[RMDB]
RNA sequence: GGGAACGACUCGAGUAGAGUCGAAAACUCAAGGUACUUUUGCAGCUUGGGCUCGUGCACAGCCACCACCAGGGAAGGGUCCAAGGAGGUCAGCCAGGACAUGGCGGCGCACGCCGAAGAGACGUACCCUCAAAGACUACUUCGGUAGUCUUUGAGGAAAAGAAACAACAACAACAAC
Reactivity to DMS in 0.01 (KOAc 150mM, MgCl2 10mM, bicine 150mM(pH8.5), 24C), signal-to-noise 2, nucleotides 027 to 126: c030u000c020a050a090g010g040u000a070c010u020u000u000u010g030c160a150g010c060u000u000g020g010g000c020u000c040g000u020g040c050a070c090a110g010c010c020a080c090c060a170c090c080a130g010g000g030a150a130g000g010g000u000c040c000a080a040g000g020a140g020g000u010c060a090g010c040c040a120g000g010a120c120a070u010g000g000c000g040g000c010g080c110a040c030g010c020c040g010a050a080g020a110g000a040c120g000u000a080c140
Reactivity to 2A3 in 0.01 (KOAc 150mM, MgCl2 10mM, bicine 150mM(pH8.5), 24C), signal-to-noise 1, nucleotides 027 to 126: c010u020c020a010a040g080g000u100a100c030u000u110u110u150g080c040a040g060c000u060u040g040g000g060c040u050c100g050u040g000c060a030c110a190g040c030c000a020c010c030a030c000c020a010g000g050g030a060a100g070g010g000u030c000c040a040a040g080g030a020g060g000u070c060a030g050c010c000a010g030g000a080c100a140u080g010g020c050g030g000c030g000c010a010c050g000c000c020g030a080a000g020a000g020a020c010g010u030a050c000